[RMDB]
RNA sequence: GGGAACGACUCGAGUAGAGUCGAAAAAUUUCGGUCCUAUGCAAUAUGAACCCAUGAACCAUGUCAGGUCCUGACGGAAGCAGCAUUAAGUGGAUCAUCAUAUGUGCCGUAGGGUAGCCGAGAUUUAGAAAGCUCGACAUGGUUCGCCAUGUCGAGCCAACCUAAGGCAGUUCGCUGCCUUAGGUUGAAAAGAAACAACAACAACAAC
Reactivity to 2A3 in 0.01 (KOAc 150mM, MgCl2 10mM, bicine 150mM(pH8.5), 24C), signal-to-noise 3, nucleotides 027 to 156: a000u030u010u000c090g080g040u300c000c000u010a020u020g000c020a010a000u000a000u010g010a030a020c010c000c000a000u030g020a020a020c130c060a050u010g070u110c000a000g010g000u010c010c010u120g170a110c150g000g010a010a010g000c020a000g000c000a000u030u020a110a030g020u000g020g010a020u010c020a030u000c010a010u050a030u070g270u090g120c090c050g010u000a010g010g010g000u000a020g000c000c000g000a010g000a000u000u020u000a070g060a080a090a000g000c000u000c000g000a000c000a010u000g020g060u050u050c130g030c060c000a000u000g000u000c000g000a000g000c000
Reactivity to DMS in 0.01 (KOAc 150mM, MgCl2 10mM, bicine 150mM(pH8.5), 24C), signal-to-noise 2, nucleotides 027 to 156: a060u000u000u000c010g000g030u000c000c010u000a040u000g010c010a070a050u000a000u000g010a100a100c020c020c000a110u000g000a120a260c150c140a060u010g030u000c060a300g020g010u010c030c010u000g030a110c200g020g010a040a130g000c010a170g000c000a130u000u010a060a300g010u000g020g030a060u010c050a130u000c030a050u000a070u010g040u000g000c090c090g000u000a060g030g000g030u000a260g000c010c000g010a030g020a050u010u000u000a090g000a120a110a150g000c000u000c000g000a020c010a060u000g010g020u000u000c290g050c050c010a000u010g000u010c000g010a020g000c020